[RMDB]
RNA sequence: GGGAACGACUCGAGUAGAGUCGAAAAGGACUAUAGGAAUCGAACCUAAUCCCAAGAAUUCAAAAAUCUUCGUGCUACCCAAUUACACCAAAUCCUAUAGUAAGGUCAGCUAAAUAAGCUAUCGGGCCCUACCUCUACAGUUCGCUGUAGAGGUAGGAAAAGAAACAACAACAACAAC
Reactivity to DMS in 0.01 (KOAc 150mM, MgCl2 10mM, bicine 150mM(pH8.5), 24C), signal-to-noise 1, nucleotides 027 to 126: g000g010a040c030u000a010u000a040g020g000a060a130u000c110g030a090a150c030c010u030a070a160u000c000c000c020a150a080g000a010a120u000u060c150a000a060a090a100a100u020c060u000u000c130g010u000g010c120u030a110c060c000c050a060a060u000u010a090c110a090c050c030a070a080a020u000c000c000u000a000u000a000g020u000a030a050g000g000u000c070a060g010c030u010a050a150a070u000a060a130g020c040u000a110u000c060g000g000g020c210
Reactivity to 2A3 in 0.01 (KOAc 150mM, MgCl2 10mM, bicine 150mM(pH8.5), 24C), signal-to-noise 2, nucleotides 027 to 126: g050g000a010c020u020a070u010a080g030g060a040a180u110c060g050a140a150c010c000u000a070a060u010c000c000c000a000a040g110a060a090u240u120c030a000a040a020a070a180u020c040u130u070c020g040u000g010c030u080a090c000c000c000a070a130u120u140a070c090a020c050c040a000a010a140u040c000c000u010a020u000a030g040u030a080a030g020g000u050c050a000g000c010u020a040a210a190u110a220a150g000c010u010a030u110c020g000g010g060c020

Chemical mapping of a 177-nucleotide RNA with DMS and 2A3.
2A3 is a SHAPE reagent: it acylates the 2'-hydroxyl of flexible nucleotides of all four kinds.
The 2A3 profile rests on 917 reads.
The reactions ran in a buffer of 150 mM KOAc, 10 mM MgCl2 and 150 mM bicine (pH 8.5), at 24 C.
The data come from the RNA Mapping Database (RMDB), library OK2TST.
Reactivities are given for positions 27 through 126.